[RMDB]
RNA sequence: GGGAACGACUCGAGUAGAGUCGAAAACUCAAUGUAGGGAAUAACAUUGAAUUGAUACAAAUACCUUUUUCGGUGUAGGGAAAAACACCGAAUUGAAACAAAUACCUUUCUCAAUGUAGGGAAUAACAAAACAGGCAUCGCUUCGGCGAUGCCUGAACAAGUCACAUCACUUCGGUGAUGUGACUUGAAAAGAAACAACAACAACAAC
Reactivity to 2A3 in 0.01 (KOAc 150mM, MgCl2 10mM, bicine 150mM(pH8.5), 24C), signal-to-noise 2, nucleotides 027 to 156: c020u010c040a010a030u040g030u090a060g110g110g090a140a180u100a110a010c010a010u010u010g020a070a020u110u120g040a120u130a110c070a050a180a100u140a060c010c000u040u040u000u000u000c000g000g090u000g010u000a010g000g010g060a160a200a000a000a000c010a000c010c000g010a000a000u010u030g010a010a010a000c000a010a110a020u210a130c010c010u070u060u000c120u030c030a070a150u060g000u060a040g020g000g070a060a100u140a130a050c100a060a090a010a010c000a000g000g000c020a000u020c020g030c000u010u090c180g010g000c000g000a000u010g020c000c000u010g000a000a000